[RMDB]
RNA sequence: GGGAACGACUCGAGUAGAGUCGAAAAGUGAGGUGGCUCACACCUGUAAUCUCAGCAAUUUGGGAGGUUGAGGCAGAAGGAUUGCUUGAGCCCAAGGAGUUUGAGACUAACCUAGGCAACACAGCAACAAUCUAGGAAAGUUCGCUUUCCUAGAUUGAAAAGAAACAACAACAACAAC
Reactivity to DMS in 0.01 (KOAc 150mM, MgCl2 10mM, bicine 150mM(pH8.5), 24C), signal-to-noise 9, nucleotides 027 to 126: g030u010g000a040g000g020u010g020g020c030u010c050a070c040a110c040c010u000g000u000a080a080u000c010u000c020a070g010c100a080a120u010u010u010g010g010g010a060g010g020u000u000g000a050g010g010c090a070g000a120a100g010g010a150u010u000g010c010u000u000g000a150g000c010c010c030a040a030g000g000a160g010u000u000u000g000a130g000a040c060u010a050a080c010c010u000a090g000g000c020a020a090c140a170c130a020g010c040a030a100
Reactivity to 2A3 in 0.01 (KOAc 150mM, MgCl2 10mM, bicine 150mM(pH8.5), 24C), signal-to-noise 7, nucleotides 027 to 126: g050u050g020a020g070g080u150g090g080c020u020c050a030c000a020c010c010u050g080u100a040a110u020c020u000c030a040g030c040a110a180u080u130u170g070g030g000a060g050g000u020u050g030a020g030g000c020a010g040a130a040g080g050a070u030u040g000c000u020u020g000a000g000c020c000c000a000a010g010g000a020g010u080u200u300g170a110g040a010c010u020a020a020c000c000u010a010g000g000c000a000a010c010a010c020a060g000c000a010a020